[RMDB]
RNA sequence: GGGAACGACUCGAGUAGAGUCGAAAAAUGAUUAUUGGUAUGACCCUAGUAGUAUUAUUCACAAGUAUCGCUACACCAGCUCAAGCCGCAUGGGGUGGAUGGAGCACAUCUGAUAAGGGUGUCACCGCAAGGGUUUAUGUCGAUGCUUACACCUACACUGCAAGAACGUAUUCGUACGUUCUUGCAGAAAAGAAACAACAACAACAAC
Reactivity to DMS in 0.01 (KOAc 150mM, MgCl2 10mM, bicine 150mM(pH8.5), 24C), signal-to-noise 1, nucleotides 027 to 156: a170u000g010a190u010u000a110u000u010g000g020u000a050u000g010a180c030c000c020u000a130g030u010a050g020u000a090u000u000a080u000u000c080a110c000a090a070g020u000a050u000c120g020c000u000a070c020a070c050c040a080g030c010u000c010a070a140g000c130c130g090c040a170u020g010g000g010g030u000g000g010a130u000g000g020a050g010c010a050c040a010u000c060u010g000a120u000a080a240g000g010g020u000g010u000c070a080c030c050g010c020a060a090g030g000g000u010u000u030a090u000g010u060c030g000a050u000g000c000u000u000a060c050a120c030c020u010a030c050a300
Reactivity to 2A3 in 0.01 (KOAc 150mM, MgCl2 10mM, bicine 150mM(pH8.5), 24C), signal-to-noise 2, nucleotides 027 to 156: a000u080g050a070u110u150a030u030u120g060g010u050a030u130g040a050c000c000c030u030a040g030u000a000g030u000a060u050u080a120u140u130c080a100c030a080a030g050u010a010u030c060g000c030u020a010c020a000c000c030a050g060c020u020c010a070a160g060c040c000g020c080a050u040g120g010g000g020u020g020g020a080u030g020g010a020g000c070a000c000a090u090c020u030g120a100u070a300a060g010g050g000u020g020u010c020a020c060c000g060c040a050a080g020g000g000u020u020u070a110u080g070u060c000g010a000u000g060c050u030u030a020c040a020c030c010u070a060c070a090
An RNA of 207 nucleotides, treated with DMS and 2A3 and read out base by base.
Reactivities are given for positions 27 through 156.
Source: RMDB library OK3TST, as collected in RNAgym.